This 177-nucleotide RNA was probed chemically with DMS. It was measured as part of the RMDB library RFMREP. For DMS, 495 sequencing reads were counted.

RNA sequence: GGGAACGACUCGAGUAGAGUCGAAAAGGGAAAGGUGAAAAGCACCCCGGGAGGGGAGUGAAACAGUACCUGAAACCGUGCGCCCGCAAGGCGUCGGAGCACCCUUUUAGAGGUGUGACGGCGUGCCCACUCGUACCAUCUUCGGAUGGUACGAGUGAAAAGAAACAACAACAACAAC
Reactivity to DMS in 0.01 (KOAc 150mM, MgCl2 10mM, bicine 150mM(pH8.5), 24C), signal-to-noise 1, nucleotides 027 to 126: g000g000g000a210a160a170g000g010u020g000a140a060a070a300g010c000a050c010c000c000c000g010g050g010a300g010g040g000g000a020g080u010g000a190a080a050c240a060g010u000a010c000c000u000g020a050a070a300c010c000g040u000g000c220g010c000c000c000g020c270a060a050g010g030c000g020u000c020g000g000a300g000c010a010c040c040c050u000u010u000u000a120g000a050g010g040u000g050u000g000a300c010g000g000c040g000u010g000c020c040

The reactions ran in a buffer of 150 mM KOAc, 10 mM MgCl2 and 150 mM bicine (pH 8.5), at 24 C.